[RMDB]
RNA sequence: GGGAACGACUCGAGUAGAGUCGAAAAAAUACGAGCGUAAUCGCGUCUUGACGUGAGUGGGCCUAGACUGUAGGCUAUAUAGCGCAAGUGUGCAUAGCGCACAAUACGCUGAUCUACAGUCAUUGAAUGGAUCAAGUAUAUUCGUAUACUUGAUCCAAAAAGAAACAACAACAACAAC
Reactivity to 2A3 in 0.01 (KOAc 150mM, MgCl2 10mM, bicine 150mM(pH8.5), 24C), signal-to-noise 9, nucleotides 027 to 126: a000a020u210a040c080g010a050g040c080g150u060a050a040u050c010g010c000g070u030c070u050u180g100a020c010g020u020g010a020g020u080g010g090g000c010c020u030a060g000a010c000u000g000u000a000g020g010c020u010a010u010a020u070a220g000c010g000c040a150a200g030u010g000u030g010c050a170u140a230g060c040g000c030a000c010a000a020u110a050c010g000c010u020g000a030u010c000u000a000c000a000g000u000c010a010u030u150g070a050a110
Reactivity to DMS in 0.01 (KOAc 150mM, MgCl2 10mM, bicine 150mM(pH8.5), 24C), signal-to-noise 9, nucleotides 027 to 126: a050a070u010a050c090g010a130g000c030g010u000a080a070u000c040g010c030g010u000c060u010u000g010a040c030g020u000g000a090g010u000g010g010g010c010c030u000a090g010a010c000u000g010u000a010g010g010c190u000a050u010a090u010a020g010c000g020c030a050a280g010u000g020u000g000c000a180u000a150g010c140g010c000a010c000a020a040u000a060c000g010c010u000g000a060u000c000u000a010c000a010g000u000c000a100u000u000g010a090a120